Structure probing data (DMS and 2A3) for a 177-nucleotide construct. In probing experiments dimethyl sulfate is read out at A N1 and C N3, which are open when not base-paired. Values cover nucleotides 27 to 126. Conditions: 150 mM KOAc, 10 mM MgCl2 and 150 mM bicine (pH 8.5), 24 C. The data come from the RNA Mapping Database (RMDB), library OK2TRN. For 2A3 the reverse transcriptase was SuperScript II with manganese.

RNA sequence: GGGAACGACUCGAGUAGAGUCGAAAAGAAGGCAUCCGACCUUGUUACAGAGAGCGUCAAUGUCAAUAUUAUAACCUUGGUCGGUGACAUACGCUUACUUGUUUUCUAAUGCUGUGGAUAGGAAGCACGACAAAACAGUUUUCGAACUGUUUUGUCGAAAAGAAACAACAACAACAAC
Reactivity to DMS in 0.01 (KOAc 150mM, MgCl2 10mM, bicine 150mM(pH8.5), 24C), signal-to-noise 3, nucleotides 027 to 126: g000a090a030g010g010c050a100u010c050c040g000a120c010c000u000u000g020u000u010a060c070a090g010a300g000a070g000c030g010u010c110a140a020u000g000u000c020a090a110u040a140u010u020a120u030a150a100c080c050u000u000g040g000u000c130g000g010u000g030a040c060a010u020a020c050g010c000u010u000a110c120u000u000g010u000u000u010u020c010u000a030a160u000g010c040u000g030u010g020g000a120u000a050g000g000a110a020g000c030a130
Reactivity to 2A3 in 0.01 (KOAc 150mM, MgCl2 10mM, bicine 150mM(pH8.5), 24C), signal-to-noise 2, nucleotides 027 to 126: g040a010a020g060g050c030a030u070c050c030g060a070c040c000u050u060g050u150u040a080c060a080g130a000g000a000g180c040g010u020c040a030a030u030g010u020c000a020a010u140a080u200u190a150u110a080a060c030c000u010u020g030g000u120c020g000g010u020g000a010c010a030u300a040c020g030c000u010u020a020c040u050u050g000u120u040u000u000c030u040a090a050u170g000c020u040g070u150g100g040a130u020a070g000g080a070a000g030c030a000